This 177-nucleotide RNA was probed chemically with 2A3 and DMS.
The DMS profile rests on 11,368 reads.
Values cover nucleotides 27 to 126.
For 2A3, 4,275 sequencing reads were counted.
Source: RMDB library M2PK50, as collected in RNAgym.
The RNA was probed in 150 mM KOAc, 10 mM MgCl2 and 150 mM bicine (pH 8.5) at 24 C.
RNA sequence: GGGAACGACUCGAGUAGAGUCGAAAAAGCUCCUGUUUCGACAGGAGCUGUGUGGCAGCCCUUUUGUGCUCGAUGUAGAGUGCUUUCCUGCCGGAAAGGGCUUGAGAGCUUGAUUCGUCAAGCUCAACCAUUGAAGUUUGUUCGCAAACUUCAAUGGAAAAGAAACAACAACAACAAC
Reactivity to 2A3 in 0.01 (KOAc 150mM, MgCl2 10mM, bicine 150mM(pH8.5), 24C), signal-to-noise 2, nucleotides 027 to 126: a000g000c000u000c010c000u000g010u010u080u080c230g080a000c010a000g000g000a000g000c000u010g000u010g000u020g040g010c060a010g000c010c010c000u000u020u030u010g040u020g000c000u010c010g070a120u270g080u280a100g000a010g030u030g030c000u070u040u020c000c020u030g050c010c010g010g010a020a020a000g000g000g000c000u060u130g140a090g000a000g030c010u010u000g020a020u040u070c140g040u000c110a000a000g000c000u010c000a010a020
Reactivity to DMS in 0.01 (KOAc 150mM, MgCl2 10mM, bicine 150mM(pH8.5), 24C), signal-to-noise 5, nucleotides 027 to 126: a010g000c000u000c000c000u000g010u000u000u010c150g020a020c010a010g000g000a000g020c000u000g000u010g020u010g010g020c060a040g010c000c010c010u010u000u000u010g030u000g010c000u000c010g010a210u000g010u010a120g000a020g010u000g010c050u000u010u000c010c010u000g000c070c040g010g000a020a010a020g010g010g010c020u000u000g010a150g000a010g010c000u000u000g000a030u000u020c200g010u000c000a010a000g010c000u000c000a070a120